[RMDB]
RNA sequence: GGGAACGACUCGAGUAGAGUCGAAAACGGAAGCAUUAAAACCAUUCGAGCUAGUCAAUGCGUGGCGUAUCUCUCCGCAGCGUGUUGGCGAAUGUAAAGAGUGACUAAGCAUGUAGUACCGAGGAUGAUAAGAGCAAUUCGUUCGCGAAUUGCUCAAGUCCUACUUUCUCUUCGGAGAAAGUAGGACAAAAGAAACAACAACAACAAC
Reactivity to DMS in 0.01 (KOAc 150mM, MgCl2 10mM, bicine 150mM(pH8.5), 24C), signal-to-noise 2, nucleotides 027 to 156: c080g050g040a240a150g040c010a030u010u010a140a100a050a000c080c070a120u000u000c000g000a230g000c070u000a230g070u000c010a020a030u010g040c000g070u000g010g070c000g030u000a070u000c150u010c010u000c280c020g060c040a040g000c040g110u000g030u000u000g000g000c020g000a070a040u000g030u020a030a060a140g000a080g040u000g000a140c050u000a050a180g020c050a050u020g030u000a100g050u010a060c010c040g000a110g000g010a110u000g020a140u000a110a140g010a060g010c020a000a020u000u000c000g030u000u000c300g060c040g030a030a000u000u010g000c000u010c000a000a050
Reactivity to 2A3 in 0.01 (KOAc 150mM, MgCl2 10mM, bicine 150mM(pH8.5), 24C), signal-to-noise 4, nucleotides 027 to 156: c030g040g060a080a010g000c040a040u070u100a040a040a030a080c050c010a010u050u050c040g030a040g050c040u100a040g030u020c000a010a000u010g010c010g010u040g050g000c020g010u080a170u060c160u010c020u030c060c010g000c000a010g010c000g000u020g030u020u010g010g000c010g000a020a020u030g010u050a020a100a100g040a020g010u040g020a030c040u050a040a010g050c030a050u070g040u100a040g060u020a080c040c060g010a050g050g010a040u150g020a020u090a220a120g000a000g000c000a000a010u000u000c010g000u040u090c140g030c010g110a000a000u000u000g000c010u000c000a000a000